[RMDB]
RNA sequence: GGGAACGACUCGAGUAGAGUCGAAAACCGACUACUUCGGUAGUCGGAAAAAAGAUAUGGAGAAGAGUAGACAUGCUCGGCGUACCUCGGAAACGAGGUGAUCCGAGCAACAGCUAUGAUUCUCCUAAGUCAAAAAAGACUUGCUUCGGCAAGUCAAGAGGAGGUUAUUGUUCGCAAUAACCUCCUCAAAAGAAACAACAACAACAAC
Reactivity to 2A3 in 0.01 (KOAc 150mM, MgCl2 10mM, bicine 150mM(pH8.5), 24C), signal-to-noise 1, nucleotides 027 to 156: c000c000g040a000c000u010a020c000u050u050c180g130g000u000a000g000u010c000g020g000a060a140a000a000a000a000g030a020u050a020u110g000g000a010g000a000a010g050a040g030u000a000g030a040c060a300u300g030c000u000c050g000g000c010g050u140a000c000c010u000c000g040g020a070a050a050c000g000a010g000g040u000g010a040u050c020c000g000a000g000c020a010a010c010a000g000c000u010a010u010g010a040u020u020c000u000c000c000u010a000a010g000u000c020a070a020a030a110a000a300g040a000c030u080u040g010c010u030u040c120g070g000c010a000a010g000u000c030a000a030
An RNA of 207 nucleotides, treated with 2A3 and read out base by base. The reactions ran in a buffer of 150 mM KOAc, 10 mM MgCl2 and 150 mM bicine (pH 8.5), at 24 C. 2A3 adducts were read by reverse transcription with SuperScript II with manganese. Reactivities are given for positions 27 through 156.